[RMDB]
RNA sequence: GGGAACGACUCGAGUAGAGUCGAAAACUUGCCGGACUAGCUGAGAGGAGGUGCAUGGCCGUCGUCAGUUCGUACCGUGAGGCGUCCUGUUAAGUCAGGCAACGAGCGAGACCCAUUUCCACUGUUGCAGAAAGACAGUUUUCGAACUGUCUUUCUGAAAAGAAACAACAACAACAAC
Reactivity to 2A3 in 0.01 (KOAc 150mM, MgCl2 10mM, bicine 150mM(pH8.5), 24C), signal-to-noise 7, nucleotides 027 to 126: c010u020u040g010c000c000g020g000a050c030u040a020g020c010u030g050a040g010a060g140g070a050g050g010u090g040c090a100u140g120g000c030c020g080u090c010g060u020c020a040g010u030u070c010g020u050a200c010c000g040u070g060a050g020g060c020g060u140c010c000u000g030u050u090a120a100g180u050c040a010g010g000c010a020a010c030g030a010g020c010g000a040g030a090c010c010c020a060u060u050u020c040c010a100c060u080g040u100u080g020
Reactivity to DMS in 0.01 (KOAc 150mM, MgCl2 10mM, bicine 150mM(pH8.5), 24C), signal-to-noise 6, nucleotides 027 to 126: c080u000u000g020c020c010g000g000a080c020u010a080g010c050u010g000a120g000a130g020g000a060g000g020u020g010c080a050u010g000g020c210c040g000u020c040g020u010c080a050g020u000u000c070g010u010a090c060c020g000u020g020a100g000g020c100g010u000c000c010u010g000u010u010a070a090g010u010c010a030g000g010c110a040a040c050g000a090g010c030g010a070g010a150c050c020c040a210u010u000u010c030c030a110c130u010g020u000u000g000